[RMDB]
RNA sequence: GGGAACGACUCGAGUAGAGUCGAAAAGAUAUGGAAAUUUCGAAGAACAUAAUCCUUCGGAAACGAAGGAGUUAUGGGAGAAGAUUCCUAAGUCAAACCCAUUCGAUACUUCGGUAUCGAAUGGGAAGCUAACAUCAAGGUUCGCCUUGAUGUUAGCAAAAGAAACAACAACAACAAC
Reactivity to 2A3 in 0.01 (KOAc 150mM, MgCl2 10mM, bicine 150mM(pH8.5), 24C), signal-to-noise 3, nucleotides 027 to 126: g010a010u050a020u120g000g040a040a050a090u050u040u030c090g160a300a050g070a170a010c000a010u010a010a010u010c000c000u000u000c020g030g050a060a040a040c010g010a010a000g020g020a020g000u020u010a000u000g030g010g010a050g010a020a020g050a050u030u030c010c000u040a150a020g060u030c060a060a030a200c000c000c010a000u000u020c000g010a000u000a010c000u000u120c300g130g000u000a010u010c000g000a010a000u000g010g000g000a000a010
Reactivity to DMS in 0.01 (KOAc 150mM, MgCl2 10mM, bicine 150mM(pH8.5), 24C), signal-to-noise 3, nucleotides 027 to 126: g010a030u010a300u000g000g000a000a020a140u000u000u000c000g000a140a140g020a190a170c000a010u000a000a030u000c000c000u000u020c000g000g010a120a050a130c020g010a020a020g000g000a050g010u000u000a000u000g000g000g010a170g000a040a030g000a080u000u000c000c000u000a070a120g020u000c040a050a070a120c000c000c000a000u000u000c010g010a020u000a000c010u000u000c220g000g000u000a000u000c000g000a000a000u000g000g020g000a000a010